[RMDB]
RNA sequence: GGGAACGACUCGAGUAGAGUCGAAAAGAACUUUGGCCGGCUCGGAAUAGAAUCAGGGGGUGCAAACUGCCCACUGGCAGAAAGGAUUAUAGAAAAUGCGUACCCUAUUGCAAUACAGCCCGGCCAACAUAGACUACUCUAUUCGUAGAGUAGUCAAUCGACUUCUAUGUUUCGACAUAGAAGUCGAAAAAGAAACAACAACAACAAC
Reactivity to 2A3 in 0.01 (KOAc 150mM, MgCl2 10mM, bicine 150mM(pH8.5), 24C), signal-to-noise 2, nucleotides 027 to 156: g050a080a010c010u050u010u020g000g000c000c000g000g020c030u070c100g030g100a130a070u190a130g030a050a040u200c110a100g000g000g000g000g020u100g000c010a030a030a050c010u010g000c020c030c090a190c220u190g000g000c010a000g050a050a070a010g060g010a050u150u050a140u160a200g160a020a120a000a000u050g010c020g040u100a090c000c040c000u020a080u000u160g040c040a000a090u040a130c000a040g050c030c020c010g000g010c000c000a000a000c000a000u070a010g000a000c000u000a000c000u000c000u010a030u070u080c120g050u060a000g000a000g000u000a000g000u000c000a000a000
Reactivity to DMS in 0.01 (KOAc 150mM, MgCl2 10mM, bicine 150mM(pH8.5), 24C), signal-to-noise 1, nucleotides 027 to 156: g000a150a170c010u000u000u000g010g050c030c040g010g050c010u000c100g030g010a120a140u000a090g000a190a110u000c100a040g000g000g000g070g040u000g000c080a030a190a090c050u000g000c000c000c090a090c140u010g030g010c000a060g000a150a100a210g020g010a220u010u000a190u000a110g000a060a040a080a140u000g020c000g030u000a150c030c020c010u000a210u010u000g000c040a070a090u000a080c050a040g000c050c030c060g060g000c000c010a010a020c080a070u010a150g010a100c010u010a020c000u000c000u000a070u000u000c190g030u000a000g000a030g000u000a000g010u000c000a000a060